[RMDB]
RNA sequence: GGGAACGACUCGAGUAGAGUCGAAAAGAUAUGGAAGAAACUCCUGAGGUGGCACCCUUGGAUUUACAGUUCGGAAACGAACUGUUGUCAGGGUGCCCACUACCCACCAGGAGUUUCUUCCUAAGUCCUCAAUACGGGAGUUCGCUCCCGUAUUGAGAAAAGAAACAACAACAACAAC
Reactivity to DMS in 0.01 (KOAc 150mM, MgCl2 10mM, bicine 150mM(pH8.5), 24C), signal-to-noise 1, nucleotides 027 to 126: g000a080u010a270u020g000g000a040a000g000a010a010a020c000u000c000c000u000g010a170g040g000u000g010g010c020a010c010c000c000u000u020g060g020a060u010u030u020a010c000a000g020u000u000c000g020g020a150a070a190c010g000a020a040c000u000g010u000u000g000u000c000a040g020g010g020u000g020c190c010c010a000c110u000a050c070c030c100a300c160c000a010g000g000a050g000u000u010u000c000u000u000c000c000u000a010a070g000u000c020
Chemical mapping of a 177-nucleotide RNA with DMS. Source: RMDB library TTRINS, as collected in RNAgym. For DMS, 1,164 sequencing reads were counted. For DMS the reverse transcriptase was MarathonRT. The reactions ran in a buffer of 150 mM KOAc, 10 mM MgCl2 and 150 mM bicine (pH 8.5), at 24 C.